[RMDB]
RNA sequence: GGGAACGACUCGAGUAGAGUCGAAAACUUACUCAUCGAGUGAUCCUGCGCCGAAAAUGAUUGGCGAUCAAGCGUUAUACCGAAGCUCUGGACUUUGCCGCAAGGCAGAGUGGUAGAAGAGCGUUGCUAAAGGUCAUAAGUUCGCUUAUGACCUUUAAAAAGAAACAACAACAACAAC
Reactivity to DMS in 0.01 (KOAc 150mM, MgCl2 10mM, bicine 150mM(pH8.5), 24C), signal-to-noise 9, nucleotides 027 to 126: c140u020u020a050c040u010c030a120u010c040g000a020g010u000g000a110u000c010c020u000g020c020g030c000c020g010a040a070a110a100u080g010a110u000u000g010g010c020g000a130u020c140a090a100g000c090g000u010u010a100u030a110c090c050g000a090a130g000c010u000c010u010g000g010a020c000u000u000u000g010c000c000g010c290a090a120g010g010c000a000g000a010g010u010g000g020u020a090g010a100a030g000a020g010c010g010u010u010g010c110
Reactivity to 2A3 in 0.01 (KOAc 150mM, MgCl2 10mM, bicine 150mM(pH8.5), 24C), signal-to-noise 7, nucleotides 027 to 126: c010u030u050a010c010u010c060a090u020c030g010a000g020u020g020a090u010c010c000u020g020c020g010c010c000g080a060a070a040a110u240g060a260u070u100g020g000c020g010a030u090c060a100a030g020c040g050u110u120a130u080a170c050c070g090a070a020g010c000u000c000u010g030g010a020c000u010u000u020g000c000c010g060c080a050a030g000g000c010a000g000a000g010u050g030g060u150a080g040a210a000g000a000g010c010g010u010u060g000c020